This 207-nucleotide RNA was probed chemically with DMS and 2A3. Source: RMDB library OK3TST, as collected in RNAgym. For DMS, 6,119 sequencing reads were counted.
[RMDB]
RNA sequence: GGGAACGACUCGAGUAGAGUCGAAAAAUGCUGAGAUUAAAGGCAUGUGCCAUCACCACCUGAACAACAGCAGCUUUCUAAGGAACCAGUAAGGCACUACAGACUUUUCAUAUAACAUCACCUUCAUUCUCUCACAACUAAUUCUACAAAACAGAUAUACCUAAUAAAUGUUCGCAUUUAUUAGGUAAAAAGAAACAACAACAACAAC
Reactivity to DMS in 0.01 (KOAc 150mM, MgCl2 10mM, bicine 150mM(pH8.5), 24C), signal-to-noise 3, nucleotides 027 to 156: a060u010g020c010u010g000a130g010a190u000u000a070a120a130g030g020c030a050u010g030u000g010c020c060a130u000c010a120c000c020a070c010c010u010g010a110a090c070a090a100c050a050g010c010a070g000c070u000u000u020c050u010a100a160g010g020a050a080c050c020a080g020u000a070a090g020g010c010a070c020u000a160c040a090g010a090c040u000u010u010u000c080a100u000a100u010a050a040c040a070u010c050a050c030c020u000u010c020a070u000u000c030u000c030u000c060a080c060a060a070c080u000a020a070u000u000c010u020a140c050a030a080a090a160c090a080g000a080u010a220
Reactivity to 2A3 in 0.01 (KOAc 150mM, MgCl2 10mM, bicine 150mM(pH8.5), 24C), signal-to-noise 8, nucleotides 027 to 156: a000u060g000c020u030g010a060g010a190u150u150a100a060a030g030g000c040a050u080g060u050g040c030c010a050u090c020a020c030c010a030c000c010u050g050a070a030c020a030a030c010a050g060c000a020g000c050u060u100u000c050u100a070a070g030g010a060a040c020c010a030g020u050a020a070g020g000c020a010c030u050a020c010a050g060a070c010u060u070u070u080c110a060u110a020u040a200a050c030a060u050c020a040c020c000u040u050c010a050u110u020c010u000c000u010c020a030c020a090a060c040u100a060a100u110u020c010u050a090c040a060a100a120a010c030a030g040a020u080a000

The 2A3 profile rests on 6,717 reads.